Chemical mapping of a 177-nucleotide RNA with 2A3 and DMS.
RNA sequence: GGGAACGACUCGAGUAGAGUCGAAAAGAAUGGCGGGACCCCACUCAACUGGGGUCCGCGUUCCAUCCUUUCUUACCUGAUGGCCGGCAUGGUCCCAGCCUCCUCGCUGGCGCCGGCUGGGCAACAUCGAUAGAUAAGGGUUCGCCCUUAUCUAUCGAAAAGAAACAACAACAACAAC
Reactivity to 2A3 in 0.01 (KOAc 150mM, MgCl2 10mM, bicine 150mM(pH8.5), 24C), signal-to-noise 2, nucleotides 027 to 126: g020a000a030u060g300g080c040g000g030g020a020c010c010c060c000a020c040u250c050a110a230c090u060g020g000g000g000u010c010c000g000c000g010u090u010c020c010a020u030c030c000u000u090u090c060u120u130a130c020c020u110g110a170u190g120g100c030c020g000g000c030a090u140g070g030u100c000c010c040a000g000c000c010u160c040c030u070c120g000c020u020g000g030c040g000c000c000g030g020c000u020g010g020g000c000a120a020c000a160u040
Reactivity to DMS in 0.01 (KOAc 150mM, MgCl2 10mM, bicine 150mM(pH8.5), 24C), signal-to-noise 2, nucleotides 027 to 126: g010a020a000u000g000g000c020g010g000g000a010c000c000c010c000a010c060u010c300a090a130c260u000g000g000g010g000u000c000c000g020c040g040u010u000c030c000a020u000c000c010u000u000u000c170u000u010a150c020c050u000g010a160u000g000g000c020c000g010g000c020a050u000g010g000u000c300c000c010a020g000c000c100u010c110c130u010c170g000c020u010g010g020c160g000c020c020g000g000c000u000g000g020g010c030a050a080c140a060u010
The DMS profile rests on 1,316 reads. For 2A3 the reverse transcriptase was SuperScript II with manganese. The 2A3 profile rests on 1,730 reads.